Source: RMDB library M2RFPK, as collected in RNAgym. Chemical mapping of a 207-nucleotide RNA with 2A3.
[RMDB]
RNA sequence: GGGAACGACUCGAGUAGAGUCGAAAACAUUACGAAUUCAGUCGCAAAUUGUAGAAUUAGCUACUCUACGAUUUAGUGAGCGUUAGUAACUUUGUAAUAUAAUAUAGUCUUUGGAAGGAUUAUAUUGGAGCCGCGGACAAGUUCGCUUGUCCGCGAAUCCUAGAACGACGUUCGCGUCGUUCUAGGAAAAAGAAACAACAACAACAAC
Reactivity to 2A3 in 0.01 (KOAc 150mM, MgCl2 10mM, bicine 150mM(pH8.5), 24C), signal-to-noise 1, nucleotides 027 to 156: c030a030u100u140a020c070g020a050a090u040u070c020a070g060u010c030g000c010a020a020a000u000u050g000u040a020g000a050a080u010u070a050g000c010u050a030c050u000c000u020a000c000g000a000u000u000u150a050g000u000g060a130g140c020g020u070u060a070g000u120a070a090c030u010u110u050g000u020a000a180u100a030u010a300a000u040a020u010a000g010u000c060u030u130u230g060g090a080a110g030g000a010u010u000a010u010a010u010u050g070g090a030g050c040c000g010c040g000g000a000c000a000a000g000u100u150c180g000c090u010u030g000u000c010c000g000c010g000a000a000